[RMDB]
RNA sequence: GGGAACGACUCGAGUAGAGUCGAAAACGACGGUUGCACCCCCCGCGGCGGUCCCUGCUAGCCGGACACCGCUGGCAACCCGGCGCCAAGACGUGCGCGCAAGGGCGGGCGCCCGCGGGCGAGCAGCCGUCUCAACGUACUUCGGUACGUUGAGACGAAAAGAAACAACAACAACAAC
Reactivity to 2A3 in 0.01 (KOAc 150mM, MgCl2 10mM, bicine 150mM(pH8.5), 24C), signal-to-noise 2, nucleotides 027 to 126: c040g060a020c000g000g000u010u000g010c010a160c000c000c000c000c000c000g000c010g000g000c020g030g140u200c000c000c000u000g000c000u000a020g080c110c060g020g070a090c170a060c060c070g000c000u000g000g010c000a010a120c000c000c000g000g000c010g000c010c000a100a090g270a160c120g100u160g070c060g000c020g000c090a130a240g010g000g000c060g000g010g000c010g070c040c110c010g000c000g000g000g000c010g000a000g000c010a000g010c000
Reactivity to DMS in 0.01 (KOAc 150mM, MgCl2 10mM, bicine 150mM(pH8.5), 24C), signal-to-noise 2, nucleotides 027 to 126: c040g000a040c010g000g000u000u000g060c000a040c170c060c300c000c040c010g000c010g000g000c050g010g020u060c000c010c050u000g000c010u000a030g000c040c130g010g040a090c300a130c120c200g030c030u010g000g000c030a230a150c010c030c020g000g000c000g020c000c020a130a070g000a080c250g010u060g000c050g020c010g020c060a100a080g000g000g000c200g040g000g020c040g020c120c010c000g060c030g010g000g020c300g010a080g000c030a000g040c000
Conditions: 150 mM KOAc, 10 mM MgCl2 and 150 mM bicine (pH 8.5), 24 C. Chemical mapping of a 177-nucleotide RNA with 2A3 and DMS. For 2A3, 1,424 sequencing reads were counted. DMS adducts were read by reverse transcription with MarathonRT. For 2A3 the reverse transcriptase was SuperScript II with manganese.